An RNA of 177 nucleotides, treated with 2A3 and DMS and read out base by base. For DMS the reverse transcriptase was MarathonRT. Conditions: 150 mM KOAc, 10 mM MgCl2 and 150 mM bicine (pH 8.5), 24 C.
[RMDB]
RNA sequence: GGGAACGACUCGAGUAGAGUCGAAAAACUCCAUGACGGCGUACGCGCCGUCAUGGAGACCGUCUCUGUCUAACGCCUCACAUGUGCAGAAAUCGUUGUGGGGCGAUUUCAGGAGGCGGAGAUAUAACAGACAUGAGUAAUUCGUUACUCAUGUCUGAAAAGAAACAACAACAACAAC
Reactivity to 2A3 in 0.01 (KOAc 150mM, MgCl2 10mM, bicine 150mM(pH8.5), 24C), signal-to-noise 3, nucleotides 027 to 126: a000c000u000c000c010a010u000g010a000c000g010g090c020g030u060a040c250g040c000g000c090c010g000u000c000a000u000g010g000a000g000a000c000c000g000u010c010u000c000u010g040u000c040u050a160a070c030g000c000c000u010c000a010c000a020u080g080u140g090c120a120g160a150a150a080u120c070g060u040u050g000u000g000g000g000g000c000g000a010u000u010u020c040a070g080g020a000g010g000c000g140g020a000g010a010u280a010u070a070a050
Reactivity to DMS in 0.01 (KOAc 150mM, MgCl2 10mM, bicine 150mM(pH8.5), 24C), signal-to-noise 4, nucleotides 027 to 126: a120c000u000c000c000a010u000g010a010c000g030g030c000g060u010a080c260g040c020g050c000c010g030u000c010a000u000g010g010a010g000a010c000c010g010u000c000u000c010u000g010u010c090u000a080a060c010g000c000c000u000c010a010c020a030u000g020u010g030c180a140g000a110a160a080u020c050g020u000u000g020u010g010g000g010g000c000g000a010u000u010u000c100a170g000g010a030g020g010c000g000g010a050g000a070u010a080u020a110a220